[RMDB]
RNA sequence: GGGAACGACUCGAGUAGAGUCGAAAAGAAGUGGCAGGGACAUGCCCCACAAGCUCGUUCUAGCAACAUAUGUUUGGCUAGUUCGAGCGAUUAGUCUUGAGGAGCGUCCUCUCGCCUAUUAACGAGACCUACGCGUAUAUUUCGAUAUACGCGUAGGAAAAGAAACAACAACAACAAC
Reactivity to DMS in 0.01 (KOAc 150mM, MgCl2 10mM, bicine 150mM(pH8.5), 24C), signal-to-noise 4, nucleotides 027 to 126: g000a090a060g020u000g010g010c010a110g000g010g000a030c060a070u010g010c000c000c000c000a060c100a100a200g000c000u010c000g020u000u000c000u020a000g000c000a050a050c030a260u070a110u030g020u020u010u040g020g010c000u000a000g000u000u000c000g000a000g000c010g000a020u010u040a070g000u030c120u010u010g000a120g010g010a170g000c090g020u000c010c010u040c050u000c110g030c010c000u020a050u010u020a050a100c100g000a150g030a240
Reactivity to 2A3 in 0.01 (KOAc 150mM, MgCl2 10mM, bicine 150mM(pH8.5), 24C), signal-to-noise 8, nucleotides 027 to 126: g100a060a030g110u080g040g000c020a010g010g010g010a020c020a040u260g030c010c000c010c000a020c010a000a020g000c000u000c000g000u000u000c000u000a010g000c000a010a080c020a080u300a060u300g170u090u090u100g130g030c000u000a000g000u000u000c000g000a000g000c000g000a000u010u060a030g050u030c050u080u150g030a160g020g000a130g010c010g010u000c000c000u060c010u010c040g000c000c010u030a070u040u130a050a020c040g010a010g080a080